[RMDB]
RNA sequence: GGGAACGACUCGAGUAGAGUCGAAAAGCUGUAAAGGCGAAUCGAAUAAAACUACACCGUCAUACCAUAUGGGUUGCCAGAGAACUAAACACUCCCCUUCUAUACCCGUUACAGGAUCUACAGCCCUAACUUCUCUACGCUUGUAAUUAUAGAAUAGGUAUAUCCACUAUUUCGAUAGUGGAUAUACAAAAGAAACAACAACAACAAC
Reactivity to 2A3 in 0.01 (KOAc 150mM, MgCl2 10mM, bicine 150mM(pH8.5), 24C), signal-to-noise 3, nucleotides 027 to 156: g020c000u000g010u080a110a110a020g040g000c020g020a030a060u120c020g070a140a050u120a120a100a090a070c060u110a030c040a030c050c010g100u070c000a030u040a130c070c020a030u050a070u210g030g020g010u030u050g040c050c000a020g040a020g030a070a040c130u140a200a220a010c100a050c080u120c000c160c010c020u050u040c020u000a020u020a080c040c030c000g000u020u040a020c030a020g030g000a050u040c000u010a010c010a030g000c020c020c000u020a070a060c010u050u000c040u020c020u030a050c050g020c030u020u030g040u070a090a060u110u120a090u070a080g100a090a050u160a060g010
Reactivity to DMS in 0.01 (KOAc 150mM, MgCl2 10mM, bicine 150mM(pH8.5), 24C), signal-to-noise 2, nucleotides 027 to 156: g010c030u000g030u000a060a150a220g030g080c000g000a130a120u000c010g000a120a180u000a080a060a150a120c030u000a090c000a080c020c010g000u000c080a120u010a130c040c030a120u020a080u010g000g030g020u000u000g020c050c070a090g010a110g000a020a120c040u000a050a060a060c040a090c040u000c000c000c010c030u000u000c020u000a110u000a080c080c020c030g020u000u000a120c080a090g040g020a110u000c010u000a010c000a040g000c010c010c010u010a040a100c020u000u000c030u000c010u000a030c030g010c060u000u010g000u000a040a070u000u000a080u000a070g000a090a080u010a050g060
The record gives the reactivity of an RNA of 207 nucleotides to 2A3 and DMS. For 2A3, 1,271 sequencing reads were counted. Source: RMDB library OK3TST, as collected in RNAgym.